[RMDB]
RNA sequence: GGGAACGACUCGAGUAGAGUCGAAAAACGCCGUCACCACGGAUUGGCUACUGUCCAGGAAUGAACACGCAUUAACAGAGAGCGAAUGUCCGUUGAAAACAAUUCGUGGUGCCGGUGCUGAGACACCCCCAUCGGUUGGAUUCGUCCAACCGAUGGGAAAAGAAACAACAACAACAAC
Reactivity to 2A3 in 0.01 (KOAc 150mM, MgCl2 10mM, bicine 150mM(pH8.5), 24C), signal-to-noise 4, nucleotides 027 to 126: a010c000g000c010c000g010u000c000a000c000c000a000c000g000g000a000u020u010g060g050c090u110a060c060u140g150u160c090c070a110g050g070a100a180u200g060a090a000c120a010c050g060c030a060u150u220a220a050c090a080g230a010g000a000g100c040g050a170a100u210g070u060c020c010g010u070u130g080a070a070a000a020c000a000a000u000u010c000g000u010g000g000u000g000c000c000g000g000u000g000c020u010g010a030g000a020c040a090c020c000
Reactivity to DMS in 0.01 (KOAc 150mM, MgCl2 10mM, bicine 150mM(pH8.5), 24C), signal-to-noise 1, nucleotides 027 to 126: a040c000g010c000c000g000u000c000a020c010c000a000c100g000g000a000u000u000g000g000c090u030a090c300u000g000u000c230c010a090g010g030a110a070u000g010a030a070c010a070c030g020c100a240u040u030a100a100c070a060g010a110g030a080g000c200g030a160a210u000g000u010c040c030g000u000u000g000a050a000a100a040c000a000a060u000u000c040g100u010g010g010u000g000c000c080g000g000u030g000c090u000g000a090g030a080c110a090c010c050
Background
Structure probing data (2A3 and DMS) for a 177-nucleotide construct. For 2A3 the reverse transcriptase was SuperScript II with manganese. Conditions: 150 mM KOAc, 10 mM MgCl2 and 150 mM bicine (pH 8.5), 24 C. The 2A3 profile rests on 1,889 reads.